[RMDB]
RNA sequence: GGGAACGACUCGAGUAGAGUCGAAAAGAUAUGGAUAACUAAGGCCUUGGAUUUAAGGGAUAAUUUACGAUAUUCGGAAACGAAUAUCGUAAAAGAUCCCUUUGUCAGGCUAUGUUAUCCUAAGUCACUCUUUAGUUUUGUUCGCAAAACUAAAGAGAAAAGAAACAACAACAACAAC
Reactivity to DMS in 0.01 (KOAc 150mM, MgCl2 10mM, bicine 150mM(pH8.5), 24C), signal-to-noise 1, nucleotides 027 to 126: g000a070u010a300u000g000g010a030u000a010a020c000u030a130a300g010g010c000c000u010u000g050g000a020u000u010u000a000a010g030g010g010a000u010a010a060u000u000u000a000c000g010a010u000a020u000u000c010g020g010a160a120a300c010g010a020a010u010a000u000c000g000u000a000a010a000a060g000a020u000c000c010c000u000u000u000g010u000c010a040g010g030c010u000a300u010g010u000u000a010u010c000c000u000a030a080g000u000c010a260